This 207-nucleotide RNA was probed chemically with DMS and 2A3. 2A3 is a SHAPE reagent: it acylates the 2'-hydroxyl of flexible nucleotides of all four kinds. Conditions: 150 mM KOAc, 10 mM MgCl2 and 150 mM bicine (pH 8.5), 24 C. The 2A3 profile rests on 1,728 reads. For DMS, 3,629 sequencing reads were counted. It was measured as part of the RMDB library OK3TST.
RNA sequence: GGGAACGACUCGAGUAGAGUCGAAAAGACCUGAAAGAUUCAUACACAAUCAAUCUGAAAGUCAGAGCAGAGCAAAUGCACCAUAAGCUGUGAAGUUACUUAGUGGUUCUUUGACUGCUUAACUGAGCUGGUGAAAGUCAGGGCCUGUGUAUAUAUGCACGUAAACGACAUUCGUGUCGUUUACGUGAAAAGAAACAACAACAACAAC
Reactivity to DMS in 0.01 (KOAc 150mM, MgCl2 10mM, bicine 150mM(pH8.5), 24C), signal-to-noise 2, nucleotides 027 to 156: g020a120c000c010u000g000a120a130a120g000a130u000u000c040a130u000a160c090a120c070a100a140u000c020a030a140u010c040u020g020a140a070a080g020u010c010a070g010a050g020c000a080g000a160g060c050a020a060a080u000g030c070a020c000c010a050u010a040a060g020c030u020g000u020g020a150a210g030u010u000a040c030u000u000a010g070u020g020g020u000u000c100u000u000u010g000a150c000u000g030c010u000u000a020a040c030u000g010a120g010c040u010g000g010u010g000a090a080a140g010u000c040a070g010g000g050c040c000u000g050u010g030u040a070u000a100u000a130u020g010
Reactivity to 2A3 in 0.01 (KOAc 150mM, MgCl2 10mM, bicine 150mM(pH8.5), 24C), signal-to-noise 3, nucleotides 027 to 156: g010a030c000c020u000g020a070a050a020g070a010u060u060c020a010u130a100c050a010c010a080a100u090c000a020a030u010c030u070g050a110a080a030g040u030c050a040g010a010g050c000a000g040a000g140c010a010a020a050u130g000c020a010c010c010a010u010a050a000g040c090u030g110u060g240a100a070g070u120u110a050c020u020u040a040g080u080g030g010u040u000c000u030u030u020g000a020c010u000g010c000u060u070a040a030c020u040g050a010g110c040u030g030g060u070g100a100a030a030g060u020c030a020g010g020g000c020c030u020g020u000g000u000a010u000a010u020a010u280g100